[RMDB]
RNA sequence: GGGAACGACUCGAGUAGAGUCGAAAAGAUAUGGACGAUUUGGAGAUCUGGGUCGGAAACGACCCUGAUCGAUGAAGACUGUCGUCCUAAGUCAAAAGAUAUGGUUGACUUCGGUCAACCAUAUCAACUAAGUUAGGUUGUUCGCAACCUAACUUAGAAAAGAAACAACAACAACAAC
Reactivity to DMS in 0.01 (KOAc 150mM, MgCl2 10mM, bicine 150mM(pH8.5), 24C), signal-to-noise 5, nucleotides 027 to 126: g000a020u000a040u010g000g000a010c000g010a030u000u000u000g000g010a020g000a010u000c000u000g000g000g010u000c010g020g000a010a010a030c000g010a010c000c000c000u000g000a000u000c000g010a110u010g010a090a160g010a030c220u010g030u010c000g010u000c000c000u000a010a120g000u000c010a080a090a110a110g000a000u000a010u000g010g000u000u000g010a020c000u000u020c210g020g000u000c000a000a010c000c000a000u000a000u000c000a080a180
Reactivity to 2A3 in 0.01 (KOAc 150mM, MgCl2 10mM, bicine 150mM(pH8.5), 24C), signal-to-noise 2, nucleotides 027 to 126: g010a010u020a010u050g000g000a000c010g000a000u000u040u090g030g030a050g000a000u000c000u010g020g000g010u020c000g010g000a020a000a010c000g000a010c000c000c000u010g000a010u000c020g000a020u010g000a000a010g030a020c120u140g070u300c010g000u010c000c000u000a000a000g000u010c030a050a020a050a170g000a000u010a000u000g010g000u000u000g020a010c000u020u130c300g010g000u000c000a000a000c000c010a000u000a000u000c000a000a010